[RMDB]
RNA sequence: GGGAACGACUCGAGUAGAGUCGAAAAUUUUAAGUUCCCAAAACUGUUGCUUAGGACAUACAAGAUCGUUCAAUGUCCAAGAAGAAACCUGAGCCGCUACAAUCAUCGGUCUAAUCUCUUUAGCAGACAAUUGUUUAUGGUUCGCCAUAAACAAUUGAAAAGAAACAACAACAACAAC
Reactivity to 2A3 in 0.01 (KOAc 150mM, MgCl2 10mM, bicine 150mM(pH8.5), 24C), signal-to-noise 2, nucleotides 027 to 126: u050u060u020u100a070a100g000u000u060c000c000c000a010a040a000a050c050u060g050u110u080g030c000u040u060a070g000g020a010c000a000u070a030c070a130a040g050a300u190c110g130u150u070c050a050a030u010g010u000c000c000a020a010g020a000a000g010a050a030a000c020c060u020g020a010g030c020c000g080c040u070a050c090a100a120u120c020a040u050c030g000g000u030c010u010a030a060u040c010u000c010u030u060u130a030g000c020a010g060a110
Reactivity to DMS in 0.01 (KOAc 150mM, MgCl2 10mM, bicine 150mM(pH8.5), 24C), signal-to-noise 4, nucleotides 027 to 126: u000u000u000u030a090a250g000u010u000c000c010c000a070a070a100a120c140u000g000u010u000g020c030u010u010a110g040g010a010c010a020u010a120c160a110a120g020a100u000c180g010u000u010c100a120a010u000g010u000c010c020a080a080g010a110a100g000a040a090a050c080c160u000g010a070g020c030c020g010c130u000a070c110a070a070u000c070a060u010c040g010g010u000c020u000a080a090u010c050u000c030u010u000u000a060g010c130a070g000a170
Conditions: 150 mM KOAc, 10 mM MgCl2 and 150 mM bicine (pH 8.5), 24 C. Structure probing data (2A3 and DMS) for a 177-nucleotide construct. The 2A3 profile rests on 1,919 reads.